[RMDB]
An RNA of 177 nucleotides, treated with DMS and 2A3 and read out base by base. DMS adducts were read by reverse transcription with MarathonRT. It was measured as part of the RMDB library OK2TST.
RNA sequence: GGGAACGACUCGAGUAGAGUCGAAAAACAUGGUUAUGCCGUAUUCGAUGGUAGAACCGAUCCGUGAACUGCUGGAUGCGGGUGUACAGUCGGACAAAAUGGAAACCGACGUGCGCUGGAGUACGGACACUGACCUAAUCUUCGGAUUAGGUCAGUGAAAAGAAACAACAACAACAAC
Reactivity to DMS in 0.01 (KOAc 150mM, MgCl2 10mM, bicine 150mM(pH8.5), 24C), signal-to-noise 3, nucleotides 027 to 126: a160c120a090u020g010g010u010u000a080u010g020c000c000g040u000a110u000u010c190g020a080u000g010g010u000a040g020a060a060c010c020g010a110u000c020c020g020u000g020a120a080c080u000g020c060u000g000g000a090u000g030c010g000g010g020u000g030u000a020c020a130g010u000c010g000g010a100c130a040a040a090a160u020g010g000a060a130a080c000c000g000a040c000g010u000g000c000g000c010u000g020g010a110g030u000a010c030g000g000a180
Reactivity to 2A3 in 0.01 (KOAc 150mM, MgCl2 10mM, bicine 150mM(pH8.5), 24C), signal-to-noise 4, nucleotides 027 to 126: a000c010a030u130g020g000u070u060a030u080g020c000c000g000u040a160u100u230c110g120a090u150g010g040u040a020g030a040a020c000c000g000a030u010c000c010g010u030g070a090a100c080u180g010c050u140g140g030a150u200g080c030g030g020g010u020g000u010a030c090a130g000u000c000g000g040a140c080a050a130a080a100u200g080g010a140a070a050c000c000g000a010c000g010u010g000c010g000c020u020g050g000a050g050u060a000c000g000g000a000